[RMDB]
RNA sequence: GGGAACGACUCGAGUAGAGUCGAAAAUACCCGGGGGGAGGCGGGGUUAACCCAUACUAUGGGAACUGCUGGGUUCCUCGGAUGUCGAUCCCCUCUCCCGUUCGGGAAAAGGGGGACUCCGGAACUCGAAUACUAGGAUUCGUCCUAGUAAAAAGAAACAACAACAACAAC
Reactivity to DMS in 0.01 (KOAc 150mM, MgCl2 10mM, bicine 150mM(pH8.5), 24C), signal-to-noise 7, nucleotides 027 to 129: u030a070c010c000c010g000g000g000g000g000g000a020g030g040c100g000g000g000g000u020u020a050a100c010c020c010a080u040a160c190u040a080u040g000g000g000a080a080c090u000g020c110u020g000g010g010u000u000c000c040u060c130g000g000a050u030g000u000c030g030a130u090c000c000c010c020u010c110u000c020c010c000g050u050u040c210g000g000g000a010a020a070a050g000g010g000g010g010a020c020u000c010c020g000g000a040a030c040u010c020g020a100a090
Reactivity to 2A3 in 0.01 (KOAc 150mM, MgCl2 10mM, bicine 150mM(pH8.5), 24C), signal-to-noise 9, nucleotides 027 to 129: u120a030c000c000c010g000g000g010g000g000g000a020g000g020c030g010g000g000g000u040u090a060a050c020c000c010a020u100a130c120u140a100u130g010g000g030a070a040c040u100g040c060u110g030g000g000u010u010c000c020u020c030g010g010a060u160g020u020c020g050a190u140c000c000c000c010u000c010u000c010c010c010g110u230u250c160g000g010g000a020a040a020a000g010g000g000g000g000a000c000u000c000c000g010g000a010a010c000u010c010g030a060a030